[RMDB]
RNA sequence: GGGAACGACUCGAGUAGAGUCGAAAAGAUAUGGACAUACUGACCAGCCAUAGAGCGAUAAGGAGCCAUCGGAAACGAUGGACCCUCCUUUUGACGCUCUCAUGGCUGGUCAGUAUGUCCUAAGUCAUCCACAACUAAAGUUCGCUUUAGUUGUGGAAAAAGAAACAACAACAACAAC
Reactivity to DMS in 0.01 (KOAc 150mM, MgCl2 10mM, bicine 150mM(pH8.5), 24C), signal-to-noise 3, nucleotides 027 to 126: g000a040u000a300u010g000g010a030c000a000u000a000c000u010g000a040c000c000a000g000c010c000a020u000a020g010a020g010c000g030a170u010a020a010g010g010a040g020c030c010a000u000c000g010g010a170a130a230c020g010a010u000g000g000a110c220c300c030u000c000c010u000u010u010u010g000a290c090g010c000u000c000u000c220a000u000g010g010c000u000g000g000u000c000a000g000u000a000u000g000u010c000c000u000a010a070g030u010c050a200